Annotation: Structure probing data (DMS and 2A3) for a 177-nucleotide construct. The data come from the RNA Mapping Database (RMDB), library OK2TRN. DMS adducts were read by reverse transcription with MarathonRT. Conditions: 150 mM KOAc, 10 mM MgCl2 and 150 mM bicine (pH 8.5), 24 C. The DMS profile rests on 1,456 reads. Values cover nucleotides 27 to 126.
[RMDB]
RNA sequence: GGGAACGACUCGAGUAGAGUCGAAAAGAAAGGCAGCAAGUGCAGCCCACGCAGUGGCAUGCUUUUGCAUGCCCAGUCGAGCCCACGACUGAGGGCAGCUGCGGCACUGAGGGCAGCUGCCGAAAGAAUUACUAUCGAGCUUCGGCUCGAUAGUAAUAAAAGAAACAACAACAACAAC
Reactivity to DMS in 0.01 (KOAc 150mM, MgCl2 10mM, bicine 150mM(pH8.5), 24C), signal-to-noise 2, nucleotides 027 to 126: g000a090a130a100g000g000c010a010g020c020a110a070g020u000g000c130a100g040c040c040c040a210c100g010c080a110g040u000g000g000c000a060u000g020c010u010u000u040u050g000c000a070u010g010c000c010c010a010g000u000c000g020a100g020c000c010c020a300c020g010a030c000u010g000a130g030g010g000c090a060g000c030u000g010c020g000g000c090a090c190u010g020a100g000g000g000c050a060g020c020u000g000c000c000g030a030a050a080g000a110
Reactivity to 2A3 in 0.01 (KOAc 150mM, MgCl2 10mM, bicine 150mM(pH8.5), 24C), signal-to-noise 1, nucleotides 027 to 126: g100a020a040a000g000g000c000a000g010c030a170a000g130u070g200c020a030g010c010c040c000a010c030g120c040a030g010u050g070g020c030a050u010g040c060u130u140u190u260g050c040a050u020g000c000c020c000a010g000u000c010g020a030g000c000c000c000a030c000g020a010c020u010g020a060g060g100g000c010a010g000c010u000g010c000g060g000c080a090c230u140g130a150g000g080g000c010a030g000c000u010g000c000c020g020a030a040a000g030a020